[RMDB]
Chemical mapping of a 207-nucleotide RNA with 2A3 and DMS. The 2A3 profile rests on 1,623 reads. It was measured as part of the RMDB library OK3TST. For DMS, 4,495 sequencing reads were counted.
RNA sequence: GGGAACGACUCGAGUAGAGUCGAAAAUGACACAAUUCCAGCUCACUGCACCUCCGCCUCCUGAGUUCAAGCAGUUCUCCUUCCUCAGCCUCCCGAGUAGCUGGGACCAUAGGCAUGCACCAACAUGCCUGGCUAACUUUUGUAUUUUUAGUAGAGACCUUUUAAAAUCAUUCGUGAUUUUAAAAGGAAAAGAAACAACAACAACAAC
Reactivity to 2A3 in 0.01 (KOAc 150mM, MgCl2 10mM, bicine 150mM(pH8.5), 24C), signal-to-noise 2, nucleotides 027 to 156: u130g030a030c020a010c010a130a150u120u030c000c030a020g030c000u010c000a030c050u090g020c040a070c010c030u030c030c010g030c030c000u010c010c010u050g040a040g020u050u070c030a040a040g030c010a030g040u030u030c020u020c030c000u020u080c010c020u020c020a030g020c010c030u050c000c040c000g000a030g010u060a010g000c010u010g000g000g030a000c020c020a060u040a030g000g000c000a020u070g000c010a020c110c000a080a090c010a020u000g000c000c000u000g000g000c010u030a050a080c010u060u060u090u070g020u030a060u010u070u010u040u060a030g040u090a030g030a040g080a130
Reactivity to DMS in 0.01 (KOAc 150mM, MgCl2 10mM, bicine 150mM(pH8.5), 24C), signal-to-noise 2, nucleotides 027 to 156: u010g000a120c060a080c070a100a090u000u000c010c040a080g010c010u000c020a050c030u000g010c040a070c030c030u000c020c030g010c060c010u030c030c040u010g010a100g030u000u010c040a020a070g000c060a080g010u000u000c010u000c040c020u030u000c010c010u010c010a030g020c020c020u010c000c010c020g040a050g030u000a040g010c020u020g010g020g000a040c030c020a110u010a030g010g020c000a030u000g010c020a200c100c080a060a120c000a010u000g050c000c000u000g010g020c020u000a040a070c040u000u000u000u010g010u010a040u020u010u000u010u000a080g010u010a110g000a160g030a170